[RMDB]
RNA sequence: GGGAACGACUCGAGUAGAGUCGAAAAAUACCCAUUGCAAUUCCAACAUCUGCUUGACUAAGUGCUGGGGCAUCAUUUAUACCAUCACCUGUUACAGCUACAACUUCGCCACUUUUUUGAAGUGCUGGGUAGUAGGAUCCUUCGGGAUCCUACUACCAAAAGAAACAACAACAACAAC
Reactivity to 2A3 in 0.01 (KOAc 150mM, MgCl2 10mM, bicine 150mM(pH8.5), 24C), signal-to-noise 3, nucleotides 027 to 126: a000u290a170c020c010c000a090u120u170g060c080a050a080u090u030c060c010a050a030c040a120u010c020u090g040c020u060u040g040a050c070u100a030a020g000u010g020c000u010g000g040g030g010c030a010u090c010a040u140u170u090a120u050a050c010c010a010u030c020a040c040c010u010g030u020u100a050c020a060g020c010u080a050c010a070a000c020u080u070c020g100c090c000a050c120u030u150u060u020u190u250g100a050a050g030u030g080c000u070g050